[RMDB]
RNA sequence: GGGAACGACUCGAGUAGAGUCGAAAAGAUAUGGAUCCCGUAGGGAGCGAGUGGUCGGAAACGACCACAUCGCGAAGAACUACUGGAUCCUAAGUCAAAACCUACGCAAUGUUCGCAUUGCGUAGGAGCUAAUACAGAGGUUCGCCUCUGUAUUAGCAAAAGAAACAACAACAACAAC
Reactivity to DMS in 0.01 (KOAc 150mM, MgCl2 10mM, bicine 150mM(pH8.5), 24C), signal-to-noise 6, nucleotides 027 to 126: g000a020u000a040u000g000g000a000u000c000c000c130g010u000a010g020g020g010a030g020c000g010a030g010u000g000g010u000c010g010g000a010a000a010c000g000a020c000c000a000c010a010u000c000g030c000g010a070a090g000a230a300c000u000a000c000u000g010g000a000u000c000c000u000a000a070g000u000c000a110a090a140a230c000c000u000a000c000g000c000a020a000u000g000u000u010c270g020c010a000u000u000g000c000g000u000a000g000g000a030
Reactivity to 2A3 in 0.01 (KOAc 150mM, MgCl2 10mM, bicine 150mM(pH8.5), 24C), signal-to-noise 4, nucleotides 027 to 126: g010a000u010a000u040g000g000a000u000c000c000c000g000u000a020g010g020g080a130g020c010g000a000g010u000g010g010u010c000g000g010a000a010a010c000g000a010c010c020a000c020a070u010c000g000c000g070a130a020g030a000a000c010u000a000c010u010g000g000a000u000c000c000u000a010a000g010u000c010a010a040a080a240c000c000u000a000c000g000c000a000a000u020g040u050u170c300g030c210a000u000u010g000c000g000u000a000g000g000a010
The record gives the reactivity of an RNA of 177 nucleotides to DMS and 2A3. Conditions: 150 mM KOAc, 10 mM MgCl2 and 150 mM bicine (pH 8.5), 24 C.